[RMDB]
RNA sequence: GGGAACGACUCGAGUAGAGUCGAAAACACGCAACAAGUGGAGUGGCGUUUCUGACUUGUCCCUCAAACAAAAACUCCUUUACACCUUCUAUGGUAAGGAGUCACUUGAGAACCCAACCUACAUUUAACGGCGAAGGGUUCGCCCUUCGCAAAAGAAACAACAACAACAAC
Reactivity to 2A3 in 0.01 (KOAc 150mM, MgCl2 10mM, bicine 150mM(pH8.5), 24C), signal-to-noise 6, nucleotides 027 to 129: c020a010c050g140c100a030a090c020a100a000g030u020g030g010a020g010u080g030g020c030g050u020u120u020c100u040g090a070c040u050u140g020u080c000c000c000u010c020a120a100a060c040a060a070a040a010a000c000u000c000c000u010u030u050a070c060a020c020c010u200u210c120u270a090u300g010g000u000a000a000g000g000a000g000u000c000a010c000u020u020g010a000g010a060a010c000c000c000a030a050c010c040u140a110c060a200u120u160u130a110a030c050g020
Reactivity to DMS in 0.01 (KOAc 150mM, MgCl2 10mM, bicine 150mM(pH8.5), 24C), signal-to-noise 3, nucleotides 027 to 129: c040a070c130g020c110a070a080c090a000a000g020u040g050g020a130g000u090g000g000c080g000u040u070u020c000u020g070a120c080u050u000g060u030c000c120c000u080c110a080a070a020c120a010a050a120a060a080c000u020c000c000u010u010u030a140c200a000c010c090u030u090c260u160a000u060g000g000u020a040a030g040g000a010g000u020c050a000c070u080u030g010a090g020a070a040c000c000c000a130a140c180c020u000a000c220a130u070u040u020a000a000c290g020
An RNA of 170 nucleotides, treated with 2A3 and DMS and read out base by base. Conditions: 150 mM KOAc, 10 mM MgCl2 and 150 mM bicine (pH 8.5), 24 C. The data come from the RNA Mapping Database (RMDB), library 15KLIB. The DMS profile rests on 8,293 reads. High 2A3 reactivity points to a flexible backbone, as in loops and unpaired stretches. In probing experiments dimethyl sulfate is read out at A N1 and C N3, which are open when not base-paired. 2A3 adducts were read by reverse transcription with SuperScript II with manganese.